An RNA of 207 nucleotides, treated with 2A3 and DMS and read out base by base. The DMS profile rests on 4,958 reads. Values are in units of 0.01, from 0 to 300, in steps of 10.
RNA sequence: GGGAACGACUCGAGUAGAGUCGAAAAUACCGUCUUCUCCCCGACGGUUUCAAUCCAUAGCUUAACGUUGUGUAGCGUAGGUGGAAGGUAUCGUGUGGUGUAUAAACACCACAUAGUCUCUUAGGGGUCAAGCUGAUAAACUUCGGUUUAUCAGCAACUAAGAUAAGCUCUUCGGAGCUUAUCUUAGAAAAGAAACAACAACAACAAC
Reactivity to 2A3 in 0.01 (KOAc 150mM, MgCl2 10mM, bicine 150mM(pH8.5), 24C), signal-to-noise 3, nucleotides 027 to 156: u050a000c000c000g010u010c040u180u050c030u120c000c000c000c010g000a010c010g010g000u000u030u080c070a030a060u010c000c020a050u110a090g010c020u100u070a090a060c040g070u110u070g130u170g130u300a020g040c010g030u020a070g050g080u050g030g040a060a040g020g000u070a030u210c040g010u020g000u000g020g010u020g050u000a110u140a300a160a020c000a010c000c010a000c000a000u010a000g000u010c000u000c010u120u140a020g010g020g000g000u040c060a070a050g000c000u000g000a000u000a000a000a000c000u010u040c210g030g010u000u000u000a000u000c000a000g000c000a000a000
Reactivity to DMS in 0.01 (KOAc 150mM, MgCl2 10mM, bicine 150mM(pH8.5), 24C), signal-to-noise 2, nucleotides 027 to 156: u000a040c000c010g010u000c030u000u000c050u000c000c010c030c110g010a040c000g020g000u020u010u000c080a070a130u000c020c040a170u010a150g000c080u000u010a110a100c060g040u000u000g050u010g020u000a090g000c050g010u010a080g050g030u000g020g020a070a080g010g030u000a060u000c070g030u010g040u000g010g010u000g010u010a180u020a160a160a090c000a020c010c000a020c010a010u000a030g010u000c040u000c020u000u010a150g010g020g000g010u000c050a080a210g010c000u020g010a030u010a010a000a020c000u000u020c270g040g040u000u000u000a010u000c000a030g010c010a000a020